[RMDB]
RNA sequence: GGGAACGACUCGAGUAGAGUCGAAAAUGGAUCUCUUGGCUGACCACGUGGCCAUACGUUCAACACUCCAGGAUGCCUGUUCCUGGAGCCAGACAGAAAAUGAGUUAGGGCUGCAAACAGGAUCUGAUCGUGUCAAAGGAUUCGUCCUUUGACACGAAAAAGAAACAACAACAACAAC
Reactivity to 2A3 in 0.01 (KOAc 150mM, MgCl2 10mM, bicine 150mM(pH8.5), 24C), signal-to-noise 4, nucleotides 027 to 126: u110g010g010a050u000c010u010c000u080u080g050g000c040u030g040a140c010c010a060c110g040u090g030g000c020c010a010u040a050c060g020u040u090c020a060a040c030a030c040u000c000c000a000g000g000a000u050g050c000c030u080g060u060u000c010c010u010g000g000a000g000c000c000a030g000a030c010a030g150a020a110a040a080u220g010a130g070u050u090a040g000g040g000c020u060g020c040a030a070a050c010a030g000g000a010u020c030u010g020a050
Reactivity to DMS in 0.01 (KOAc 150mM, MgCl2 10mM, bicine 150mM(pH8.5), 24C), signal-to-noise 3, nucleotides 027 to 126: u020g000g000a060u000c040u000c040u000u020g010g010c030u000g000a090c060c050a080c130g040u010g000g010c030c040a030u020a040c160g000u020u000c040a030a090c300a240c010u000c000c000a000g020g000a020u010g010c070c030u010g000u000u000c000c010u000g000g030a000g020c070c100a160g020a030c160a060g000a090a030a080a080u020g000a060g000u010u000a080g010g010g010c020u010g000c020a060a050a030c060a020g010g000a080u000c030u000g000a300